Structure probing data (2A3 and DMS) for a 177-nucleotide construct. High 2A3 reactivity points to a flexible backbone, as in loops and unpaired stretches. Reactivities are rounded to 0.1 and cut off at 0 and 3. The RNA was probed in 150 mM KOAc, 10 mM MgCl2 and 150 mM bicine (pH 8.5) at 24 C.

RNA sequence: GGGAACGACUCGAGUAGAGUCGAAAAUAUGAAGCAGAGCUUUGUAGGCUGGAAUUAAAGAUCAAAGAAUCUAAUAGGAUGAUUGAACGUCAACGAUCAUACAUCAAGGAGAUAGAACGGGAAAUUACACACUCAUCCAAUUCGUUGGAUGAGUGUGAAAAGAAACAACAACAACAAC
Reactivity to 2A3 in 0.01 (KOAc 150mM, MgCl2 10mM, bicine 150mM(pH8.5), 24C), signal-to-noise 2, nucleotides 027 to 126: u120a020u090g020a040a000g010c030a010g070a040g120c040u100u070u080g090u100a020g020g040c040u070g010g020a010a020u060u100a160a080a020g000a010u050c070a040a130a170g120a090a040u030c020u050a050a060u050a170g110g000a000u000g020a000u030u070g030a080a030c010g040u060c040a060a080c050g030a020u010c010a030u030a140c010a010u040c070a110a040g070g000a050g040a050u080a050g060a020a000c030g040g040g040a000a160a000u210u170a080
Reactivity to DMS in 0.01 (KOAc 150mM, MgCl2 10mM, bicine 150mM(pH8.5), 24C), signal-to-noise 3, nucleotides 027 to 126: u000a070u000g000a080a090g010c040a170g020a130g000c000u000u000u010g020u020a060g030g000c060u000g000g020a090a070u020u000a070a090a070g010a060u020c070a100a110a170g000a110a030u020c020u000a040a070u010a140g000g000a040u000g010a160u010u010g020a070a160c110g000u020c140a040a080c050g010a050u000c020a030u000a100c080a040u010c080a080a150g000g000a040g020a120u000a030g000a090a030c090g000g000g000a060a060a060u000u010a140